Source: RMDB library OK3TST, as collected in RNAgym. An RNA of 207 nucleotides, treated with 2A3 and DMS and read out base by base. Reactivities are given for positions 27 through 156. The 2A3 profile rests on 5,083 reads. In probing experiments dimethyl sulfate is read out at A N1 and C N3, which are open when not base-paired. Conditions: 150 mM KOAc, 10 mM MgCl2 and 150 mM bicine (pH 8.5), 24 C. For DMS the reverse transcriptase was MarathonRT.

RNA sequence: GGGAACGACUCGAGUAGAGUCGAAAAUGGAGACUGAUGGCCAUAAUUCACAGAGUCAUGAAGCCGUGACUUCGCCUAUAACGGAUCAAAUGUCACCCCAGGAGAUUACAGUCGGGCAGGAUAUUCCAUCCAUCAUCACUACGGGUGAAGAGGCAUCACCUGUACAAACAUUCGUGUUUGUACAGGUAAAAGAAACAACAACAACAAC
Reactivity to 2A3 in 0.01 (KOAc 150mM, MgCl2 10mM, bicine 150mM(pH8.5), 24C), signal-to-noise 6, nucleotides 027 to 156: u090g020g000a020g020a030c040u050g020a020u040g070g000c020c010a060u110a130a110u140u070c010a030c010a070g010a030g050u030c030a060u060g060a100a050g050c060c020g050u030g030a050c000u050u070c060g050c020c020u140a130u060a230a050c080g030g000a030u040c060a030a070a090u100g050u070c020a050c000c000c020c000a010g040g040a060g020a030u110u160a100c050a080g060u040c050g010g020g000c030a040g020g030a020u040a080u120u080c040c030a030u000c020c000a030u060c020a010u050c020a030c070u140a060c100g040g000g040u010g000a010a020g020a040g010g010c000a020u070c020
Reactivity to DMS in 0.01 (KOAc 150mM, MgCl2 10mM, bicine 150mM(pH8.5), 24C), signal-to-noise 3, nucleotides 027 to 156: u010g030g010a100g020a090c040u000g000a070u010g020g000c010c010a100u010a080a040u010u010c100a130c080a120g020a050g000u010c030a030u000g000a100a110g030c090c030g000u000g000a070c000u000u000c010g050c000c010u000a130u000a100a100c060g010g000a090u000c080a040a070a060u010g010u000c040a110c010c010c000c030a230g030g000a150g000a180u000u000a110c050a110g020u000c090g000g010g010c020a100g020g030a070u000a070u000u000c060c030a120u000c010c010a150u000c030a060u030c070a060c090u010a060c070g000g000g030u000g010a050a080g010a140g030g010c070a160u000c060